[RMDB]
This 177-nucleotide RNA was probed chemically with DMS and 2A3. It was measured as part of the RMDB library M2PK90.
RNA sequence: GGGAACGACUCGAGUAGAGUCGAAAAAUUACGGGCGGCGCAGGUGGAGCUGCGAUCCCUCCGCCCAUCGCGUGCUCUCUCGGUGGCCCAGACGCUGCAAACGGACAGGCGGGCCACCAGCAACGAAUUCACUAGUAUGGUUCGCCAUACUAGUGAAAAAAGAAACAACAACAACAAC
Reactivity to DMS in 0.01 (KOAc 150mM, MgCl2 10mM, bicine 150mM(pH8.5), 24C), signal-to-noise 4, nucleotides 027 to 126: a070u010u000a090c140g010g030g010c020g010g020c100g010c140a030g000g010u010g010g000a130g010c000u000g010c020g000a140u000c020c030c010u000c010c000g000c000c000c020a110u010c060g010c070g010u000g000c030u000c120u000c120u000c120g020g010u000g000g010c000c000c010a120g000a080c090g000c000u000g020c070a080a090a140c300g000g000a170c020a030g000g010c060g000g000g000c000c000a010c010c000a020g000c090a060a040c070g010a080a100
Reactivity to 2A3 in 0.01 (KOAc 150mM, MgCl2 10mM, bicine 150mM(pH8.5), 24C), signal-to-noise 4, nucleotides 027 to 126: a000u180u130a100c090g000g010g000c010g020g000c010g010c020a000g000g050u120g110g150a110g080c020u020g000c010g030a070u040c000c010c020u010c000c000g000c000c000c010a020u060c030g030c050g020u030g030c010u000c000u010c010u030c180g000g000u000g000g010c000c000c000a070g040a060c140g020c120u030g000c020a090a210a210c090g050g100a100c000a010g010g000c000g000g000g000c000c000a000c000c010a000g000c010a010a030c010g040a020a120